[RMDB]
RNA sequence: GGGAACGACUCGAGUAGAGUCGAAAACAUCCUCGGAUAGGUCGGGCCCUCUCGGGACUGCUGUCGCCCCGGAGACUCUCGGAGAUGGAGAUGCCUCGGCGCGGGUGGCCUCGGUCCAGGAGGCGAACAUAAUAGGUAACUUCGGUUACCUAUUAUGAAAAGAAACAACAACAACAAC
Reactivity to 2A3 in 0.01 (KOAc 150mM, MgCl2 10mM, bicine 150mM(pH8.5), 24C), signal-to-noise 5, nucleotides 027 to 126: c010a100u070c000c010u020c030g040g050a150u130a180g050g080u040c020g010g070g010c020c020c000u020c020u020c020g070g000g010a010c010u020g000c020u020g020u030c020g020c000c010c010c010g000g000a010g000a010c000u020c010u010c030g140g140a260g050a190u250g180g010a040g010a030u170g020c000c010u030c030g160g040c050g010c130g030g000g000u010g020g000c000c000u010c010g020g010u000c010c000a010g080g010a000g000g020c050g020a030a000
Reactivity to DMS in 0.01 (KOAc 150mM, MgCl2 10mM, bicine 150mM(pH8.5), 24C), signal-to-noise 6, nucleotides 027 to 126: c160a120u000c020c010u000c050g010g010a110u010a090g000g000u000c030g010g000g000c060c010c010u010c010u000c040g010g000g000a020c010u000g010c050u000g010u000c010g000c010c010c000c000g000g000a030g000a020c010u000c010u000c010g030g010a230g000a180u010g000g010a030g010a030u010g010c010c000u000c010g010g000c050g030c140g020g020g020u000g000g010c000c030u000c010g010g010u000c000c010a100g010g000a020g010g010c120g010a070a160
The record gives the reactivity of an RNA of 177 nucleotides to 2A3 and DMS.
For DMS the reverse transcriptase was MarathonRT.
2A3 adducts were read by reverse transcription with SuperScript II with manganese.
The data come from the RNA Mapping Database (RMDB), library VIROID.